[RMDB]
RNA sequence: GGGAACGACUCGAGUAGAGUCGAAAAGAUAUGGAGGAAACAAGCUUUUGACGUCGGCUCGGAAACGAGGACGACGAUAAGCUUGUCCUCCUAAGUCAAAACAUCAUUGGCUUCGGCCAAUGAUGAAUCCGUAUCUAGCGUUCGCGCUAGAUACGGAAAAAGAAACAACAACAACAAC
Reactivity to 2A3 in 0.01 (KOAc 150mM, MgCl2 10mM, bicine 150mM(pH8.5), 24C), signal-to-noise 1, nucleotides 027 to 126: g040a020u090a030u080g030g010a010g000g000a110a300a010c010a010a010g000c020u030u140u270u300g240a050c020g000u010c010g010g000c010u000c010g030g000a030a110a060c010g010a000g040g080a140c000g000a000c000g000a010u030a060a000g000c020u030u010g000u010c000c000u020c000c000u010a050a010g060u000c030a000a000a020a160c000a000u020c000a000u000u000g000g000c000u030u090c300g150g040c020c000a000a000u020g000a000u000g010a000a060
Reactivity to DMS in 0.01 (KOAc 150mM, MgCl2 10mM, bicine 150mM(pH8.5), 24C), signal-to-noise 1, nucleotides 027 to 126: g030a010u010a300u000g000g000a050g010g000a070a040a030c000a010a000g010c000u000u010u010u000g020a100c050g010u000c000g040g010c010u020c000g000g000a070a040a130c020g030a020g000g000a160c020g030a020c000g020a090u000a000a040g010c000u000u020g010u000c000c000u000c000c010u000a020a030g010u000c050a090a110a100a190c000a000u000c000a020u000u000g000g000c000u000u010c250g000g010c000c000a000a010u000g010a010u000g010a020a060
Chemical mapping of a 177-nucleotide RNA with 2A3 and DMS. The reactions ran in a buffer of 150 mM KOAc, 10 mM MgCl2 and 150 mM bicine (pH 8.5), at 24 C. For DMS the reverse transcriptase was MarathonRT. 2A3 is a SHAPE reagent: it acylates the 2'-hydroxyl of flexible nucleotides of all four kinds. Reactivities are given for positions 27 through 126. The 2A3 profile rests on 1,829 reads.